An RNA of 177 nucleotides, treated with 2A3 and read out base by base. Source: RMDB library OK1LIB, as collected in RNAgym. The reactions ran in a buffer of 150 mM KOAc, 10 mM MgCl2 and 150 mM bicine (pH 8.5), at 24 C. For 2A3, 2,028 sequencing reads were counted. 2A3 adducts were read by reverse transcription with SuperScript II with manganese.

[RMDB]
RNA sequence: GGGAACGACUCGAGUAGAGUCGAAAAGGUCGGUCCGGAUGGGUAUCUGUGUACGGAUCGACCAAGGUGUAGUGCAACACAGAUACCCAUCGCACUGCACCAGUGGAGAUGCGAAAGCAUUUCCACAGGUCGUAGUUGGGUUCGCCCAACUACGACCAAAAGAAACAACAACAACAAC
Reactivity to 2A3 in 0.01 (KOAc 150mM, MgCl2 10mM, bicine 150mM(pH8.5), 24C), signal-to-noise 1, nucleotides 027 to 126: g000g000u010c000g000g020u010c010c000g050g010a020u030g080g000g000u110a040u060c030u040g000u030g010u020a000c040g010g020a040u010c030g010a000c000c010a010a010g020g000u040g030u000a070g000u020g070c020a050a040c010a000c000a060g010a020u060a030c000c000c000a000u000c010g000c000a000c000u010g000c040a010c000c010a030g000u000g000g000a000g000a010u000g000c000g030a060a000a030g010c000a000u000u000u000c000c000a000c000a010